[RMDB]
RNA sequence: GGGAACGACUCGAGUAGAGUCGAAAAAGAUUUCGAUCCUUAUAGCAUGCUCCAGUAUGUGAUAAACGGUGAUUAUCUGAAUGAUCCUGAUUUCAAUGUAUCGUAUAGUCUAAAAGAGAAAGAGACACCAUUAGGGGACAUUCGUGUCCCCUAAUGGAAAAGAAACAACAACAACAAC
Reactivity to 2A3 in 0.01 (KOAc 150mM, MgCl2 10mM, bicine 150mM(pH8.5), 24C), signal-to-noise 1, nucleotides 027 to 126: a000g040a010u070u070u050c040g040a050u070c000c010u090u040a100u100a050g020c000a000u030g020c020u080c070c020a020g030u020a000u030g070u000g050a070u030a090a080a020c060g040g000u050g020a110u030u040a010u100c020u040g140a150a060u070g070a060u050c000c010u000g070a180u060u170u060c140a090a060u180g090u080a040u070c010g000u100a010u010a170g050u000c040u030a050a050a130a200g170a040g050a070a000a050g080a000g040a010c000a030
Reactivity to DMS in 0.01 (KOAc 150mM, MgCl2 10mM, bicine 150mM(pH8.5), 24C), signal-to-noise 2, nucleotides 027 to 126: a020g000a090u000u000u000c060g000a120u000c020c000u000u000a080u000a160g010c040a040u000g000c000u020c140c070a050g020u000a040u000g010u020g010a010u010a060a050a100c220g000g010u000g010a110u000u000a050u020c080u000g020a110a100u010g000a100u020c010c000u000g010a120u000u000u000c100a070a080u010g000u020a020u020c040g020u010a140u000a070g040u000c030u020a070a030a050a130g000a040g010a030a070a170g000a040g000a080c090a190
The record gives the reactivity of an RNA of 177 nucleotides to 2A3 and DMS. The reactions ran in a buffer of 150 mM KOAc, 10 mM MgCl2 and 150 mM bicine (pH 8.5), at 24 C.